[RMDB]
RNA sequence: GGGAACGACUCGAGUAGAGUCGAAAAUCCUAAUCGUUCGCGAUUAGGAAAAUAAGGAAACCUUCGUGCUGGCGCGACUAUAUGAGUGCUCGCCCUCAUAAAAAACUCAGCUCUUCGGAGCUGAGAAUCAGAAUAGUCAGUUCGCUGACUAUUCUGAAAAAGAAACAACAACAACAAC
Reactivity to DMS in 0.01 (KOAc 150mM, MgCl2 10mM, bicine 150mM(pH8.5), 24C), signal-to-noise 2, nucleotides 027 to 126: u000c000c010u000a020a000u000c000g010u000u000c230g030c010g000a010u000u010a000g010g000a000a030a080a040u010a120a160g010g020a130a210a160c030c030u000u000c090g000u000g000c110u020g000g020c070g010c090g000a060c040u000a110u000a070u010g000a100g000u020g010c060u000c090g000c030c000c020u010c010a050u030a000a100a070a080a100a070c010u000c000a000g000c010u000c000u000u000c180g020g000a000g000c020u010g000a000g000a010a050
Reactivity to 2A3 in 0.01 (KOAc 150mM, MgCl2 10mM, bicine 150mM(pH8.5), 24C), signal-to-noise 3, nucleotides 027 to 126: u020c000c010u000a000a000u000c000g020u020u050c180g010c000g060a000u000u000a010g000g020a050a090a010a080u150a040a020g120g030a060a080a040c000c000u100u120c100g070u040g020c040u060g090g000c050g000c010g050a040c030u050a040u090a140u300g170a110g080u090g020c030u030c060g020c000c010c000u040c010a030u170a020a170a000a040a030a080c010u000c000a000g020c000u000c030u060u110c200g090g000a000g000c000u000g000a000g010a000a020
Conditions: 150 mM KOAc, 10 mM MgCl2 and 150 mM bicine (pH 8.5), 24 C. This 177-nucleotide RNA was probed chemically with DMS and 2A3. In probing experiments dimethyl sulfate is read out at A N1 and C N3, which are open when not base-paired. DMS adducts were read by reverse transcription with MarathonRT.